[RMDB]
This 177-nucleotide RNA was probed chemically with 2A3. The 2A3 profile rests on 349 reads. The RNA was probed in 150 mM KOAc, 10 mM MgCl2 and 150 mM bicine (pH 8.5) at 24 C. Source: RMDB library OK1LIB, as collected in RNAgym.
RNA sequence: GGGAACGACUCGAGUAGAGUCGAAAACUUUGCGAACUUCUCUGAAGCAUUAGCUGAAGGUCGCGGUAAAGCACAAGCCAACGCUUUACGCCAAACACAAACUGAAAUGAAGGCACGUCGUAUUAAACCGCUCUAAUCCGUUCGCGGAUUAGAGCGGAAAAGAAACAACAACAACAAC
Reactivity to 2A3 in 0.01 (KOAc 150mM, MgCl2 10mM, bicine 150mM(pH8.5), 24C), signal-to-noise 1, nucleotides 027 to 126: c000u010u050u190g000c000g000a000a000c000u000u000c000u090c010u000g040a030a000g020c120a100u090u110a080g000c010u000g000a000a000g000g000u000c040g010c000g110g000u000a000a000a000g010c030a090c020a050a200g010c000c040a160a000c070g040c000u160u000u000a000c030g020c010c000a000a110a000c000a000c170a300a200a000c030u200g010a000a120a070u260g000a200a000g070g000c000a000c000g010u030c080g000u020a040u000u300a300a140a080